[RMDB]
RNA sequence: GGGAACGACUCGAGUAGAGUCGAAAAGAUAUGGAGUGUACGAGCUCGAUAAGCUGAGGUCGGAAACGACCUACAGCUUUUGACGAGCGAGUACACUCCUAAGUCAAAAGUACCGUUCGCGGUACAAUCGUGAUUCAUAGUUCGCUAUGAAUCACGAAAAAGAAACAACAACAACAAC
Reactivity to 2A3 in 0.01 (KOAc 150mM, MgCl2 10mM, bicine 150mM(pH8.5), 24C), signal-to-noise 1, nucleotides 027 to 126: g030a000u080a040u170g000g010a000g000u020g000u020a020c010g020a010g000c010u010c070g050a090u030a120a000g080c000u010g040a000g020g000u010c020g010g020a090a080a040c000g010a000c000c010u040a110c010a010g000c070u030u020u000u070g060a030c050g000a000g000c010g000a000g000u000a000c000a010c010u010c000c000u000a000a000g010u030c000a010a000a030a140g000u020a010c000c030g020u060u050c300g000c010g110g000u030a010c050a020a150
Reactivity to DMS in 0.01 (KOAc 150mM, MgCl2 10mM, bicine 150mM(pH8.5), 24C), signal-to-noise 3, nucleotides 027 to 126: g000a020u000a300u020g000g010a040g020u000g000u010a000c000g000a300g010c010u010c000g000a200u010a030a000g000c000u000g010a070g010g010u000c000g000g000a130a100a230c000g040a010c000c000u000a090c010a020g000c000u000u000u000u000g000a210c140g010a020g020c000g000a290g020u010a010c000a010c000u000c000c000u000a010a060g000u000c040a090a080a160a130g000u000a000c000c000g010u000u000c250g050c010g000g000u010a000c010a050a070